Structure probing data (DMS and 2A3) for a 177-nucleotide construct. The RNA was probed in 150 mM KOAc, 10 mM MgCl2 and 150 mM bicine (pH 8.5) at 24 C. DMS adducts were read by reverse transcription with MarathonRT. High 2A3 reactivity points to a flexible backbone, as in loops and unpaired stretches.

RNA sequence: GGGAACGACUCGAGUAGAGUCGAAAACGAGGAGGUGGAGAUGCCAUGCCGACCCGAAGAGGAAAGAAGGACGCGAGACGCGAACCUGUGAGUGGAAACCCGCUUUAUUCACUGGGGUCGACAACUCGGUAAUACUAUAGUUCGCUAUAGUAUUACCAAAAGAAACAACAACAACAAC
Reactivity to DMS in 0.01 (KOAc 150mM, MgCl2 10mM, bicine 150mM(pH8.5), 24C), signal-to-noise 8, nucleotides 027 to 126: c090g000a070g010g010a070g010g020u000g010g010a080g010a100u000g010c070c080a110u010g010c010c020g010a070c030c010c020g010a080a070g010a130g010g000a070a070a110g010a090a040g010g010a200c070g020c050g010a100g000a090c130g010c020g000a050a050c020c020u010g010u000g000a040g030u000g010g000a050a080a120c120c020c030g010c100u000u000u000a070u010u000c040a050c040u010g000g000g010g000u000c010g010a050c060a040a100c120u010c080
Reactivity to 2A3 in 0.01 (KOAc 150mM, MgCl2 10mM, bicine 150mM(pH8.5), 24C), signal-to-noise 6, nucleotides 027 to 126: c040g010a050g040g020a040g010g030u060g020g040a100g010a050u110g020c020c010a040u060g000c000c010g020a040c020c000c000g030a080a030g060a040g050g030a060a040a050g080a030a010g020g000a010c010g040c030g050a140g050a090c110g030c010g030a120a190c000c010u030g020u050g040a020g010u030g000g030a120a110a080c020c010c000g030c040u060u090u080a140u080u050c020a020c080u040g030g000g000g000u010c000g010a030c010a070a050c020u040c090